[RMDB]
RNA sequence: GGGAACGACUCGAGUAGAGUCGAAAACAAGACCGCCUCUGUCAAUCAAGGGCGAAGGCCGGGGGCUAGAAGGCGAUCAGACACCACCGUAUUCCCGGCCGUAAACGGUGCCGCCCCGCGGCCGGCGGUUAUAUACUAACUUCGGUUAGUAUAUAACAAAAGAAACAACAACAACAAC
Reactivity to DMS in 0.01 (KOAc 150mM, MgCl2 10mM, bicine 150mM(pH8.5), 24C), signal-to-noise 9, nucleotides 027 to 126: c110a090a100g010a060c060c010g010c010c010u000c070u010g010u020c110a090a120u040c130a100a120g010g010g010c020g010a120a110g000g020c000c000g010g000g000g000g010c070u020a090g010a100a070g010g000c050g000a070u020c090a100g000a130c110a100c140c010a050c030c030g000u000a140u000u010c020c010c000g010g000c030c020g000u010a030a070a080c060g000g000u000g010c120c060g000c010c010c010c040g010c060g000g000c030c060g000g010c100g010
Reactivity to 2A3 in 0.01 (KOAc 150mM, MgCl2 10mM, bicine 150mM(pH8.5), 24C), signal-to-noise 9, nucleotides 027 to 126: c040a050a040g060a060c010c020g020c000c010u090c040u090g100u120c060a080a160u070c050a130a120g070g010g000c030g040a070a040g020g000c010c010g000g000g010g010g020c020u070a050g060a150a030g100g010c030g030a050u120c040a010g070a060c030a020c060c000a010c000c020g020u030a130u050u070c000c000c000g020g010c000c000g000u010a020a020a000c010g010g010u030g040c020c010g010c000c000c000c020g120c020g030g000c000c000g000g010c000g000
The data come from the RNA Mapping Database (RMDB), libraries RFM100 and RFMREP. An RNA of 177 nucleotides, treated with DMS and 2A3 and read out base by base. Conditions: 150 mM KOAc, 10 mM MgCl2 and 150 mM bicine (pH 8.5), 24 C. For 2A3 the reverse transcriptase was SuperScript II with manganese. For DMS the reverse transcriptase was MarathonRT.